[RMDB]
RNA sequence: GGGAACGACUCGAGUAGAGUCGAAAAGUGUAUCAUUAUACACACUGAUAAUGACAGACCUGGGAGGAAGUUCACUAAAUCAUUUCCACCACAAAACAUUCAACUGAGAAUAGGUACAGCAUAAUGAGUAUCCUCGUGGAUUCGUCCACGAGGAUACAAAAGAAACAACAACAACAAC
Reactivity to DMS in 0.01 (KOAc 150mM, MgCl2 10mM, bicine 150mM(pH8.5), 24C), signal-to-noise 1, nucleotides 027 to 126: g000u070g010u000a060u000c140a140u000u000a110u000a070c040a020c010a160c040u000g010a130u000a080a090u000g000a120c120a060g000a100c010c030u000g000g010g000a170g010g000a080a060g010u000u000c170a040c180u020a060a060a130u000c010a060u000u000u000c120c000a000c040c090a030c190a080a020a170a040c000a100u000u000c130a120a090c140u010g000a140g020a040a030u000a020g010g010u000a010c060a100g040c130a080u000a030a060u000g020a300
Reactivity to 2A3 in 0.01 (KOAc 150mM, MgCl2 10mM, bicine 150mM(pH8.5), 24C), signal-to-noise 1, nucleotides 027 to 126: g010u040g000u000a000u070c070a140u060u300a060u090a090c010a010c000a010c040u030g070a080u060a190a130u120g060a070c040a020g080a050c000c030u080g020g030g020a120g010g060a070a010g030u030u080c120a040c160u110a070a020a200u050c030a020u030u000u050c030c030a110c000c000a040c010a050a110a000a000c040a010u160u010c040a020a090c090u080g030a020g010a180a040u100a170g120g000u150a090c030a020g070c000a060u050a240a040u220g030a040
An RNA of 177 nucleotides, treated with DMS and 2A3 and read out base by base. For DMS, 523 sequencing reads were counted. The RNA was probed in 150 mM KOAc, 10 mM MgCl2 and 150 mM bicine (pH 8.5) at 24 C.